[RMDB]
RNA sequence: GGGAACGACUCGAGUAGAGUCGAAAAGUCGAGUACCAAGAGUGCACUGCACAUGGUCCAAUGAACAAGGACAUCAAGUAUCAUCUGUAUUCUUUAGACAAGCUAUCGCAACAUAAAGGAACCUACCUCAUCAUCGAGUUUUCGAACUCGAUGAUGAAAAAGAAACAACAACAACAAC
Reactivity to 2A3 in 0.01 (KOAc 150mM, MgCl2 10mM, bicine 150mM(pH8.5), 24C), signal-to-noise 5, nucleotides 027 to 126: g120u080c050g000a010g050u060a050c010c010a050a030g060a030g050u030g000c030a050c210u120g000c000a020c030a080u060g000g020u020c000c010a080a110u220g040a060a090c060a130a090g020g040a020c030a070u180c060a060a050g060u080a070u150c020a010u000c040u060g090u050a090u080u010c000u020u070u010a060g020a080c030a050a020g030c000u090a050u200c060g000c070a050a070c030a160u130a130a040a030g060g000a030a040c000c010u050a060c000c000
Reactivity to DMS in 0.01 (KOAc 150mM, MgCl2 10mM, bicine 150mM(pH8.5), 24C), signal-to-noise 2, nucleotides 027 to 126: g020u050c090g000a120g060u000a000c000c120a090a090g000a010g000u000g020c040a140c110u000g010c140a030c020a080u030g020g000u000c040c020a080a120u030g050a130a080c230a080a130g000g010a070c020a140u000c090a110a020g000u000a010u000c100a020u020c050u070g040u000a060u000u000c080u000u000u000a030g070a060c080a030a160g060c050u000a060u000c060g000c100a060a020c100a130u010a050a000a030g010g000a130a060c020c090u000a050c150c060